[RMDB]
RNA sequence: GGGAACGACUCGAGUAGAGUCGAAAACAGCUAGUCAUUCCAUGGCUUUAAGAUUACAAUGUACUUGAGUCAUUGACAUGUGAGAUCAAUAUACCUGCAUGUUAGUCUUAAGUUCUGAUAGAAAUGAGACUGACACAAAGUUCGCUUUGUGUCAGUCAAAAGAAACAACAACAACAAC
Reactivity to 2A3 in 0.01 (KOAc 150mM, MgCl2 10mM, bicine 150mM(pH8.5), 24C), signal-to-noise 2, nucleotides 027 to 126: c020a000g090c040u070a000g030u080c000a020u200u040c090c040a050u030g010g000c000u010u010u150a130a040g020a030u000u060a100c070a110a130u200g000u010a030c000u000u000g010a000g060u030c040a070u040u060g000a020c010a010u040g020u010g210a050g000a070u170c050a160a050u120a010u010a290c000c000u020g000c000a000u000g040u020u020a010g010u000c000u000u020a000a010g000u020u000c010u030g150a120u120a270g110a060a080a010u020g010a030
Reactivity to DMS in 0.01 (KOAc 150mM, MgCl2 10mM, bicine 150mM(pH8.5), 24C), signal-to-noise 1, nucleotides 027 to 126: c080a090g000c040u000a030g070u000c060a070u000u000c110c060a120u000g000g010c040u000u010u000a090a180g000a150u020u000a130c130a100a090u000g010u000a000c020u000u010g010a040g000u030c050a080u000u000g010a010c000a000u010g000u000g010a050g010a030u000c200a130a160u000a180u010a210c010c000u000g010c000a010u000g010u000u000a000g010u000c080u040u000a010a030g030u000u000c020u000g000a220u010a110g000a050a010a010u000g000a200